[RMDB]
Description
An RNA of 207 nucleotides, treated with DMS and 2A3 and read out base by base. The data come from the RNA Mapping Database (RMDB), library OK3TST.

RNA sequence: GGGAACGACUCGAGUAGAGUCGAAAAGCAACAGAUAACUGGAUGCAGCGUAGGAUUCUACGCAUAUCCAGUACGAAUGGUACCUGUAAAGAAAAUAACUCUGGAUGUACAAGUACCAACAGAGGGUUAAGCGAUGGUGAUGUCAAUCACAUUUGCAGGCAUUUAUACUGUUCGCAGUAUAAAUGCCAAAAGAAACAACAACAACAAC
Reactivity to DMS in 0.01 (KOAc 150mM, MgCl2 10mM, bicine 150mM(pH8.5), 24C), signal-to-noise 1, nucleotides 027 to 156: g030c060a070a170c060a040g030a040u000a040a120c030u000g000g000a000u000g020c260a180g000c000g040u000a040g000g020a240u000u000c000u000a000c000g000c010a300u000a110u000c000c000a020g000u030a110c070g080a110a120u030g020g020u000a000c030c000u020g080u000a060a130a140g040a240a080a120a210u000a040a100c170u000c010u000g000g000a170u010g040u000a060c040a050a090g030u000a030c030c000a050a130c010a110g000a080g090g010g020u000u000a090a110g010c050g020a040u010g040g030u040g000a030u000g010u010c120a150a110u000c020a070c010a060u000u020u000g060c040a200
Reactivity to 2A3 in 0.01 (KOAc 150mM, MgCl2 10mM, bicine 150mM(pH8.5), 24C), signal-to-noise 2, nucleotides 027 to 156: g050c010a010a070c030a010g060a140u080a130a050c000u000g000g000a000u040g040c120a050g000c090g020u000a000g050g120a300u300u110c000u000a000c000g010c000a000u020a000u020c000c000a000g010u000a000c030g070a070a040u050g010g000u020a000c000c000u010g030u100a120a100a000g030a010a140a000a030u090a040a020c050u020c010u070g070g030a070u070g020u020a020c000a040a070g030u000a000c000c000a020a020c000a020g040a000g050g020g020u070u090a100a040g000c040g030a030u090g060g140u040g010a030u030g100u210c090a080a010u010c000a000c000a120u030u030u280g040c020a030